Structure probing data (2A3 and DMS) for a 207-nucleotide construct.
RNA sequence: GGGAACGACUCGAGUAGAGUCGAAAACCUGGUUUAGGGUUCCAGGCUAGCCCUAUCUAUCGGUCGAGAUGCGAGCGCUUAAGCUCAAAUUGAGUGCCUGAGUUAGUGGUGAACGUAUCCCUAUGUUAAAACGGUAGCUGCUUCGGCAGCUACCGAACACUCAUCAGAUCUUCGGAUCUGAUGAGUGAAAAGAAACAACAACAACAAC
Reactivity to 2A3 in 0.01 (KOAc 150mM, MgCl2 10mM, bicine 150mM(pH8.5), 24C), signal-to-noise 2, nucleotides 027 to 156: c020c000u020g000g010u070u080u050a040g000g000g040u050u020c020c010a010g000g040c030u040a020g010c000c000c000u000a010u010c030u040a160u110c000g010g020u010c010g000a010g000a060u100g010c000g010a000g000c080g000c230u300u300a090a050g000c000u000c000a000a040a000u000u030g000a010g010u220g040c000c040u050g010a000g020u020u000a040g010u090g230g010u020g020a060a030c080g020u060a120u130c000c000c000u020a080u110g090u090u160a110a150a040a020c020g010g000u000a000g000c010u000g030c020u020u090c220g100g010c000a000g000c000u000a000c000c000g000a000a000
Reactivity to DMS in 0.01 (KOAc 150mM, MgCl2 10mM, bicine 150mM(pH8.5), 24C), signal-to-noise 2, nucleotides 027 to 156: c030c030u000g000g020u000u000u000a080g030g000g020u010u000c020c000a090g030g020c030u000a300g000c000c000c030u010a030u000c010u000a070u010c120g000g030u010c010g020a270g040a060u090g040c300g000a040g040c000g050c260u000u000a120a140g020c020u000c030a000a300a130u000u010g010a300g000u010g040c040c000u030g010a170g040u000u000a020g010u030g030g020u010g000a130a090c090g030u000a120u080c010c000c000u010a150u000g000u000u000a040a050a140a190c000g020g080u000a010g050c000u000g000c000u000u010c240g060g010c000a000g020c000u030a000c000c000g000a000a040

For 2A3 the reverse transcriptase was SuperScript II with manganese. The data come from the RNA Mapping Database (RMDB), library M2RFPK. Values are in units of 0.01, from 0 to 300, in steps of 10.